Chemical mapping of a 177-nucleotide RNA with 2A3 and DMS. DMS adducts were read by reverse transcription with MarathonRT. The reactions ran in a buffer of 150 mM KOAc, 10 mM MgCl2 and 150 mM bicine (pH 8.5), at 24 C.

RNA sequence: GGGAACGACUCGAGUAGAGUCGAAAAGCCUAGGACCCGUACUAUCAAGUAUUGCUGAAUCCCGUCAGGACUGGAAGGUAGCAGCGGUAAGCGAUUUUUUUGAUGAGUACGUAAGUCUUAGGUUUAACUUCAGAGGAAUCUUCGGAUUCCUCUGAAGAAAAGAAACAACAACAACAAC
Reactivity to 2A3 in 0.01 (KOAc 150mM, MgCl2 10mM, bicine 150mM(pH8.5), 24C), signal-to-noise 3, nucleotides 027 to 126: g000c010c000u010a000g000g000a000c000c000c040g000u010a000c000u010a010u000c000a000a030g020u020a020u020u020g000c000u040g060a100a130u120c040c000c000g050u080c010a030g030g030a030c000u090g060g180a140a070g090g010u020a010g020c010a000g010c000g010g000u020a010a010g000c010g000a030u000u000u030u000u060u080u040g010a020u010g080a000g010u000a000c000g000u010a030a000g000u000c000u000u000a000g000g000u020u000u000a000a010
Reactivity to DMS in 0.01 (KOAc 150mM, MgCl2 10mM, bicine 150mM(pH8.5), 24C), signal-to-noise 2, nucleotides 027 to 126: g000c000c000u020a020g000g010a030c010c010c010g000u000a020c000u000a030u000c010a000a010g010u000a000u000u000g050c000u010g000a190a170u030c230c000c000g010u020c010a300g050g000a020c000u000g000g090a160a100g040g000u000a030g000c000a200g020c000g000g030u000a220a000g000c040g000a000u000u000u020u000u060u010u000g000a010u010g000a030g030u000a020c000g000u010a070a100g000u010c000u000u010a020g000g000u000u000u010a010a080